[RMDB]
RNA sequence: GGGAACGACUCGAGUAGAGUCGAAAACCCGUUCAUUUCGAUGAACGGGAGUGGGUAACCCUAGGACCAGUAGUGGGACCCGUAGUGGCCGUGGGACCAGAAAAGAGUUAACAUUCGUGUUAACUAAUGUCAUACCUAAUUUCGAUUAGGUAUGACAAAAAGAAACAACAACAACAAC
Reactivity to 2A3 in 0.01 (KOAc 150mM, MgCl2 10mM, bicine 150mM(pH8.5), 24C), signal-to-noise 4, nucleotides 027 to 126: c000c000c000g000u000u000c000a030u010u050u140c210g100a020u000g000a000a010c000g000g020g000a020g050u120g020g050g030u050a130a160c010c000c020u020a060g050g040a110c020c020a040g060u090a030g070u230g030g010g040a040c000c000c020g020u040a070g060u040g020g000c040c020g030u060g040g000g000a090c020c000a030g170a040a100a010a020g190a010g000u000u010a010a000c010a010u040u100c140g040u050g000u040u000a010a000c000u020a050a070
Reactivity to DMS in 0.01 (KOAc 150mM, MgCl2 10mM, bicine 150mM(pH8.5), 24C), signal-to-noise 6, nucleotides 027 to 126: c000c000c010g010u000u000c000a010u000u000u010c180g020a020u010g000a000a010c000g000g000g000a050g010u000g010g000g010u010a100a120c030c010c010u000a110g010g000a160c040c040a070g000u000a070g020u010g010g000g000a110c030c020c020g010u010a050g010u010g010g010c040c030g010u000g010g010g000a120c050c040a110g000a080a070a100a120g000a030g000u000u000a000a010c000a060u000u010c170g020u000g000u010u000a000a010c000u000a050a100

Notes: An RNA of 177 nucleotides, treated with 2A3 and DMS and read out base by base. For DMS, 10,144 sequencing reads were counted. It was measured as part of the RMDB library M2PK50. Conditions: 150 mM KOAc, 10 mM MgCl2 and 150 mM bicine (pH 8.5), 24 C.